[RMDB]
RNA sequence: GGGAACGACUCGAGUAGAGUCGAAAACCGGGGGUACUCGGCUCACGCACGGCGGUAUUCCGCAAGCCCGAGUCGUUGCUGCCCGAGUUGACGAAGCUCGGGUAGCUGGUGCCAGGGCUUCUAAGGCGAAGACCGUCCCAUUCGUGGGACGGUCUUCAAAAGAAACAACAACAACAAC
Reactivity to 2A3 in 0.01 (KOAc 150mM, MgCl2 10mM, bicine 150mM(pH8.5), 24C), signal-to-noise 2, nucleotides 027 to 126: c010c000g010g000g030g010g000u060a090c020u060c190g090g050c020u000c050a060c020g080c000a000c000g090g000c010g000g000u050a080u150u070c040c000g060c040a010a000g000c020c000c000g000a030g030u020c040g140u140u130g040c020u010g000c020c000c000g000a000g020u010u020g090a190c210g040a040a000g020c000u000c000g000g010g000u010a000g000c000u000g010g000u060g000c040c010a100g000g010g080c000u080u040c060u170a060a130g030g000c050